[RMDB]
RNA sequence: GGGAACGACUCGAGUAGAGUCGAAAACUUGCAUUGCAUAAACGUUGUCGCCAUUAAAUUCUGGCUGCGGACCCGAAGUGUGUGCGGGCCCAGGACUUACUCGAAGGGCGCACUUCUUGGGAAUGCGCUCUUACUGAACAUUCGUGUUCAGUAAGAGAAAAGAAACAACAACAACAAC
Reactivity to 2A3 in 0.01 (KOAc 150mM, MgCl2 10mM, bicine 150mM(pH8.5), 24C), signal-to-noise 9, nucleotides 027 to 126: c030u040u090g020c040a130u040u140g020c020a040u120a120a140a030c120g020u010u020g030u030c020g000c010c000a030u100u180a080a070a140u230u070c050u040g020g000c030u060g010c020g020g010a030c000c000c020g050a030a040g020u050g010u030g020u040g090c020g030g090g040c000c000c000a020g030g030a060c080u150u160a080c040u120c090g060a110a090g020g010g000c010g000c010a000c010u020u010c020u060u110g020g000g000a010a010u030g000c010g000
Reactivity to DMS in 0.01 (KOAc 150mM, MgCl2 10mM, bicine 150mM(pH8.5), 24C), signal-to-noise 9, nucleotides 027 to 126: c050u000u010g010c060a090u000u010g010c050a080u010a060a100a110c150g000u000u000g010u000c070g010c010c020a060u010u010a080a090a140u020u020c190u000g000g010c040u010g020c030g000g000a300c010c010c010g000a040a060g010u000g020u000g020u000g010c030g010g010g000c030c010c020a090g010g000a100c110u010u010a070c100u010c050g000a100a120g000g010g010c010g000c010a010c040u000u000c010u010u010g010g010g000a030a160u010g000c010g000
The record gives the reactivity of an RNA of 177 nucleotides to 2A3 and DMS. Source: RMDB libraries RFM100 and RFMREP, as collected in RNAgym. High DMS reactivity at an A or C suggests that its Watson-Crick edge is free. The RNA was probed in 150 mM KOAc, 10 mM MgCl2 and 150 mM bicine (pH 8.5) at 24 C. DMS adducts were read by reverse transcription with MarathonRT.